Record summary: Structure probing data (DMS and 2A3) for a 177-nucleotide construct. Source: RMDB library OK2TRN, as collected in RNAgym. DMS adducts were read by reverse transcription with MarathonRT. The RNA was probed in 150 mM KOAc, 10 mM MgCl2 and 150 mM bicine (pH 8.5) at 24 C. The DMS profile rests on 700 reads.
[RMDB]
RNA sequence: GGGAACGACUCGAGUAGAGUCGAAAACUAAUUGCUAAUGCCAGUUAAGAAUAAUUAUUACUUGGACAAGUUCAGAUGGAAUUAGUAGGCUACAAAUGAUUCAAGUGAGGAUAAACUUUGCAUUUGCACCGAACGACUAGUUCGCUAGUCGUUCGGUAAAAGAAACAACAACAACAAC
Reactivity to DMS in 0.01 (KOAc 150mM, MgCl2 10mM, bicine 150mM(pH8.5), 24C), signal-to-noise 1, nucleotides 027 to 126: c030u020a010a080u040u000g010c000u010a040a040u000g000c030c300a020g000u030u030a110a140g000a060a110u000a080a070u010u010a070u000u010a000c000u000u000g010g000a020c100a040a140g020u000u010c090a090g000a160u000g010g030a070a070u000u000a070g020u010a090g000g010c050u010a030c020a040a070a100u010g000a130u000u000c010a040a040g010u000g000a040g000g030a100u000a050a050a050c030u030u000u000g060c010a050u000u000u010g010c100
Reactivity to 2A3 in 0.01 (KOAc 150mM, MgCl2 10mM, bicine 150mM(pH8.5), 24C), signal-to-noise 1, nucleotides 027 to 126: c010u000a090a180u090u090g000c000u020a000a010u000g000c000c070a020g000u000u060a040a130g050a070a120u120a150a000u100u100a020u190u020a060c010u000u070g030g030a060c010a040a030g000u110u110c000a090g050a300u130g080g020a050a070u090u000a100g050u010a080g160g000c010u020a020c020a000a090a020u100g070a200u060u060c010a000a000g010u000g050a050g050g000a020u020a100a030a000c000u020u020u110g000c000a000u000u000u070g010c050